[RMDB]
RNA sequence: GGGAACGACUCGAGUAGAGUCGAAAAUCCUCUCGUUAAUCAAACAUAUAUUGUUAUAGUCGCAAACGACGAAACUUACGCUCUAGCAGCUUAAACCCUGCUUACUUAGUUGCUGAUCACCUACAGUUGGUUAACUAAGUUGAAGCGUCCGCAUGUACGAAUAAAUGGACUUCGGUCCAUUUAUUCGAAAAGAAACAACAACAACAAC
Reactivity to DMS in 0.01 (KOAc 150mM, MgCl2 10mM, bicine 150mM(pH8.5), 24C), signal-to-noise 1, nucleotides 027 to 156: u000c040c010u000c060u010c040g000u000u040a110a140u020c130a110a190a100c090a090u000a110u010a160u000u000g000u000u000a080u000a140g050u000c040g000c070a160a080a140c010g000a060c010g010a110a070a070c050u000u000a120c050g020c010u000c010u020a040g020c010a000g010c060u000u000a070a130a120c220c220c000u000g040c030u000u000a030c010u000u010a040g010u000u010g010c050u000g000a020u010c050a100c120c060u010a120c100a090g000u020u000g000g020u000u000a030a030c020u000a000a050g000u000u000g030a130a050g020c030g000u000c060c100g000c080a080u000g000u000a120
Reactivity to 2A3 in 0.01 (KOAc 150mM, MgCl2 10mM, bicine 150mM(pH8.5), 24C), signal-to-noise 3, nucleotides 027 to 156: u000c020c000u060c040u040c060g110u040u170a160a110u200c070a080a160a040c050a060u270a060u140a100u200u090g020u120u090a140u050a240g030u010c060g040c200a140a210a170c090g040a010c010g020a050a010a000c010u080u050a010c000g000c010u000c000u010a000g000c030a000g000c010u020u130a020a030a070c010c000c010u010g020c010u000u000a000c000u000u000a000g020u010u000g010c000u020g000a050u070c040a110c170c090u140a100c030a070g010u020u020g020g020u050u180a010a000c000u000a000a000g000u050u110g180a160a000g000c000g010u050c050c070g280c020a100u110g050u090a060